[RMDB]
RNA sequence: GGGAACGACUCGAGUAGAGUCGAAAAUUCGAGAACCUCAAGGACAUUUGGGGGGCCAAGUGGGACUCUGUAAACAACCCUAGGAUAGGGGCGCUGAUGACUCCCAACACGCUGUCGCUGAUUUUCUUUGUGAGCGCGUUUUACGACCACGGGGUGCGUAUCAGUCCUCAUUCGUGAGGACUGAUACAAAAGAAACAACAACAACAAC
Reactivity to 2A3 in 0.01 (KOAc 150mM, MgCl2 10mM, bicine 150mM(pH8.5), 24C), signal-to-noise 1, nucleotides 027 to 156: u150u130c070g010a100g020a070a040c010c020u040c030a000a100g090g020a100c070a190u050u040u080g000g000g000g000g000g000c040c020a030a010g070u070g010g000g050a020c020u020c030u110g060u110a040a060a000c020a060a100c020c100c000u030a040g050g070a040u080a120g000g000g040g000c020g020c060u020g030a120u010g020a070c020u020c010c030c040a000a000c010a000c010g070c040u100g090u210c000g000c060u010g050a120u170u120u100u000c100u170u240u130g070u020g040a020g000c010g000c000g000u000u060u050u130a050c060g010a010c030c000a000c020g000g040g000g000u000g000c000
Chemical mapping of a 207-nucleotide RNA with 2A3. It was measured as part of the RMDB library OK3TST. For 2A3 the reverse transcriptase was SuperScript II with manganese. The RNA was probed in 150 mM KOAc, 10 mM MgCl2 and 150 mM bicine (pH 8.5) at 24 C.